[RMDB]
RNA sequence: GGGAACGACUCGAGUAGAGUCGAAAAGAGCGUCCCGAAGGCGUUGAGGCGGGAACAUCGAGAGUAAUUGGCACAGAUUAUGACAAUAUUGUUCGAAAUGUGAAACAAUUGAUUGAGGAUGAUGAAGCCCCGGCUUAUUAUUCGUAAUAAGCCGGGGAAAAGAAACAACAACAACAAC
Reactivity to 2A3 in 0.01 (KOAc 150mM, MgCl2 10mM, bicine 150mM(pH8.5), 24C), signal-to-noise 2, nucleotides 027 to 126: g060a000g020c050g000u050c050c020c000g080a120a040g020g030c050g000u080u090g020a040g070g000c070g020g000g000a020a030c040a030u110c060g010a000g020a000g180u190a070a060u030u030g030g010c000a010c000a060g020a020u060u090a080u200g030a060c000a000a000u130a210u290u180g060u100u080c000g050a060a030a090u030g000u030g020a010a090a000c000a000a010u010u090g020a060u000u040g070a040g100g030a080u040g030a010u060g050a060a070g010
Reactivity to DMS in 0.01 (KOAc 150mM, MgCl2 10mM, bicine 150mM(pH8.5), 24C), signal-to-noise 2, nucleotides 027 to 126: g000a040g000c090g000u030c000c000c030g020a120a040g000g020c070g000u040u020g000a030g010g000c080g000g000g050a110a140c100a020u000c010g000a090g000a060g010u010a030a050u000u020g000g000c020a040c010a020g010a110u000u000a060u020g020a050c020a030a140u000a050u010u010g010u040u020c030g000a070a080a100u020g010u030g000a000a050a040c020a020a000u000u000g010a140u050u000g000a140g000g010a020u030g000a080u000g000a120a140g000